[RMDB]
RNA sequence: GGGAACGACUCGAGUAGAGUCGAAAAAGAGCGGUGAUUACUUCAGAGUCUGAAAAGACUCUACAUCCGUCAUCGUUUAAUUGUUUACUUCAUGUUAAGACGGAUGUAGACGUGAAGUAAGCUGAUAGAUUCAGUUAGUAUUCGUACUGGCUGAAUCAAAAGAAACAACAACAACAAC
Reactivity to 2A3 in 0.01 (KOAc 150mM, MgCl2 10mM, bicine 150mM(pH8.5), 24C), signal-to-noise 9, nucleotides 027 to 126: a000g150a020g020c040g010g020u070g040a130u030u040a020c010u020u030c020a010g010a010g050u000c000u020g040a020a040a020a020g000a000c000u000c000u000a000c000a000u010c010c000g010u000c010a050u070c050g070u030u080u130a150a150u100u100g090u080u070u070a110c030u050u110c050a060u100g030u080u140a110a040g010a010c010g020g010a010u030g010u010a030g050a050c080g100u030g000a000a000g000u000a000a000g010c010u010g020a080u070a160
Reactivity to DMS in 0.01 (KOAc 150mM, MgCl2 10mM, bicine 150mM(pH8.5), 24C), signal-to-noise 9, nucleotides 027 to 126: a070g000a050g000c010g000g020u000g000a110u000u000a010c020u000u000c010a050g010a040g010u000c000u000g000a120a080a130a020g000a010c000u000c000u000a000c020a000u000c010c020g000u000c010a060u010c060g010u020u010u000a070a090u010u010g000u000u000u010a110c090u000u010c160a150u030g010u000u010a070a100g000a030c000g000g000a010u000g000u000a010g010a090c240g010u000g000a010a010g010u000a010a030g000c000u010g000a080u030a070